Structure probing data (DMS and 2A3) for a 177-nucleotide construct. High 2A3 reactivity points to a flexible backbone, as in loops and unpaired stretches.
RNA sequence: GGGAACGACUCGAGUAGAGUCGAAAACUUUAGAGAUCAGCCCAACCCACUUACACAGUUGAGCAGAGUUGGAGGCCUAGAGAGGGGAGGGACUGGCCCAAGGUCAUACCAACUCAUGGCCAGAGCCGUGUAAAAACCGAUUCGUCGGUUUUUACACAAAAGAAACAACAACAACAAC
Reactivity to DMS in 0.01 (KOAc 150mM, MgCl2 10mM, bicine 150mM(pH8.5), 24C), signal-to-noise 3, nucleotides 027 to 126: c050u000u010u000a120g020a100g010a110u000c070a090g010c010c000c020a050a170c030c010c020a140c150u020u000a090c160a070c160a080g010u000u000g010a060g030c120a130g010a010g010u000u000g010g030a120g010g020c010c020u010a100g010a090g000a090g010g000g020g010a190g000g020g010a090c060u010g010g010c010c010c010a170a050g010g010u000c010a080u020a190c020c010a030a030c010u010c010a060u000g020g010c020c010a150g000a110g020c100c120
Reactivity to 2A3 in 0.01 (KOAc 150mM, MgCl2 10mM, bicine 150mM(pH8.5), 24C), signal-to-noise 1, nucleotides 027 to 126: c030u220u190u120a190g010a030g010a150u120c050a000g020c020c010c000a040a050c000c010c000a080c020u040u070a010c040a000c000a080g100u160u080g070a010g010c100a060g010a000g040u010u020g000g000a040g000g000c000c010u050a070g020a000g020a060g100g000g000g060a050g060g000g080a090c020u030g020g030c000c030c010a030a060g000g000u000c020a080u050a110c010c000a040a000c000u040c030a030u060g030g000c020c000a030g010a030g070c010c110
The reactions ran in a buffer of 150 mM KOAc, 10 mM MgCl2 and 150 mM bicine (pH 8.5), at 24 C. 2A3 adducts were read by reverse transcription with SuperScript II with manganese.